Structure probing data (2A3 and DMS) for a 177-nucleotide construct. Conditions: 150 mM KOAc, 10 mM MgCl2 and 150 mM bicine (pH 8.5), 24 C. For DMS, 5,283 sequencing reads were counted. 2A3 adducts were read by reverse transcription with SuperScript II with manganese. Reactivities are rounded to 0.1 and cut off at 0 and 3. Source: RMDB library OK2TRN, as collected in RNAgym.
RNA sequence: GGGAACGACUCGAGUAGAGUCGAAAAAGCGAAGGAAGGAAACUUCCGUUUAAGGUCGUCGUAGGCCUCCAUUCUCGACUCUUUGAGGAUGCCGAGAUACUCUCUGAUUGGAGGAUACCUCAGAAAGCCACUUUUACAGAUUCGUCUGUAAAAGUGGAAAAGAAACAACAACAACAAC
Reactivity to 2A3 in 0.01 (KOAc 150mM, MgCl2 10mM, bicine 150mM(pH8.5), 24C), signal-to-noise 3, nucleotides 027 to 126: a010g130c090g050a090a050g020g010a020a000g000g000a050a050a070c000u030u000c000c010g010u030u010u030a050a000g020g010u020c030g000u020c070g030u070a050g030g100c000c000u020c000c010a080u060u000c030u000c010g040a030c020u020c060u130u100u180g110a080g030g010a020u100g050c010c020g020a000g000a030u120a090c050u060c020u000c050u110g130a300u150u160g030g020a010g010g000a050u070a100c010c010u040c000a010g130a100a050a010g040
Reactivity to DMS in 0.01 (KOAc 150mM, MgCl2 10mM, bicine 150mM(pH8.5), 24C), signal-to-noise 5, nucleotides 027 to 126: a090g010c110g000a100a110g010g020a010a020g010g000a100a100a220c000u000u000c000c010g000u010u000u010a110a060g010g030u000c020g010u000c160g010u020a100g000g000c010c000u000c040c020a070u010u000c020u000c010g010a040c050u000c020u000u000u010g020a090g000g010a040u000g020c050c030g010a020g000a050u000a050c070u000c050u000c070u000g000a220u010u000g010g000a030g010g000a110u000a040c010c010u000c030a110g010a100a090a140g010